[RMDB]
RNA sequence: GGGAACGACUCGAGUAGAGUCGAAAAAAAGUCGAGAUUGCCGGCUUCAAAGGCUUUAUCGUUGAUUACGUGUGCUAUAACAACGCCAUAGGUAUCAUUCUUCGUCUUCUUAGGCGCGGAACAUCUAGAUGCAACUUAUGUUCGCAUAAGUUGCAUCAAAAGAAACAACAACAACAAC
Reactivity to DMS in 0.01 (KOAc 150mM, MgCl2 10mM, bicine 150mM(pH8.5), 24C), signal-to-noise 2, nucleotides 027 to 126: a050a070a090g030u020c010g000a100g010a070u020u000g030c060c040g040g030c180u000u010c190a040a100a210g010g010c020u020u000u020a020u030c010g030u000u010g000a080u010u020a040c080g000u010g010u000g040c030u000a040u000a110a120c160a080a080c140g010c050c010a100u010a070g000g020u010a040u010c080a100u000u010c020u000u010c020g000u000c030u000u010c200u000u020a070g020g000c000g000c080g020g000a020a100c190a040u000c040u000a090
Reactivity to 2A3 in 0.01 (KOAc 150mM, MgCl2 10mM, bicine 150mM(pH8.5), 24C), signal-to-noise 1, nucleotides 027 to 126: a000a000a010g080u020c020g000a020g010a110u060u000g070c010c000g060g080c040u110u080c070a120a090a000g040g030c000u050u050u020a030u050c020g010u020u070g000a080u050u040a040c040g050u140g020u090g070c020u040a040u050a300a050c120a060a010c040g010c000c000a040u060a090g000g110u040a010u080c010a080u020u040c040u070u040c000g030u030c000u270u010c010u130u210a000g000g000c010g000c010g000g000a030a010c010a000u000c030u020a020

Source: RMDB library RFMREP, as collected in RNAgym.
Chemical mapping of a 177-nucleotide RNA with DMS and 2A3.
For 2A3, 920 sequencing reads were counted.
For DMS the reverse transcriptase was MarathonRT.
Reactivities are given for positions 27 through 126.